[RMDB]
RNA sequence: GGGAACGACUCGAGUAGAGUCGAAAAAGACGUGAACCUCAUAGGCACGGUCUGCCUGGACUUCAUCUCCAGACUCAUGAAUGGAUUCAUUUACCGCACCCAGUACCGAGAAAACCCAGACGUAGUGGACGUGUCACAAAUGUUUAGCUAUGACGAAAGUAAAUACCCGAUUCGUCGGGUAUUUACUAAAAGAAACAACAACAACAAC
Reactivity to 2A3 in 0.01 (KOAc 150mM, MgCl2 10mM, bicine 150mM(pH8.5), 24C), signal-to-noise 4, nucleotides 027 to 156: a010g020a020c020g010u020g020a090a120c020c020u070c060a140u170a190g010g000c000a000c070g040g020u000c010u010g050c000c000u010g010g020a040c020u090u060c120a090u020c050u020c020c010a050g020a100c010u030c060a070u140g100a030a030u060g050g020a040u070u080c030a020u070u080u180a050c030c020g010c010a040c000c000c000a010g030u030a040c010c030g040a030g040a070a060a020a000c040c020c040a020g020a030c050g010u030a020g080u030g000g050a060c050g030u030g040u100c030a000c020a030a050a050u050g050u040u080u040a070g010c040u050a050u120g050a060c040g060a070a200
Reactivity to DMS in 0.01 (KOAc 150mM, MgCl2 10mM, bicine 150mM(pH8.5), 24C), signal-to-noise 3, nucleotides 027 to 156: a050g020a090c060g010u010g010a100a080c020c030u000c080a140u000a020g000g020c020a080c040g010g020u000c040u000g010c030c010u000g010g010a050c090u000u000c150a130u000c060u000c030c020a080g000a050c020u000c070a080u000g000a090a110u010g010g000a180u010u010c020a040u020u000u000a100c040c030g000c040a150c010c010c020a150g010u000a090c080c010g000a180g010a080a050a070a180c030c000c030a200g000a110c060g020u000a060g010u010g010g000a050c030g020u000g000u020c070a090c080a050a050a060u000g000u000u000u000a090g030c050u000a100u000g030a130c070g000a150a080
This 207-nucleotide RNA was probed chemically with 2A3 and DMS. For 2A3, 2,063 sequencing reads were counted. Reactivities are rounded to 0.1 and cut off at 0 and 3. 2A3 adducts were read by reverse transcription with SuperScript II with manganese.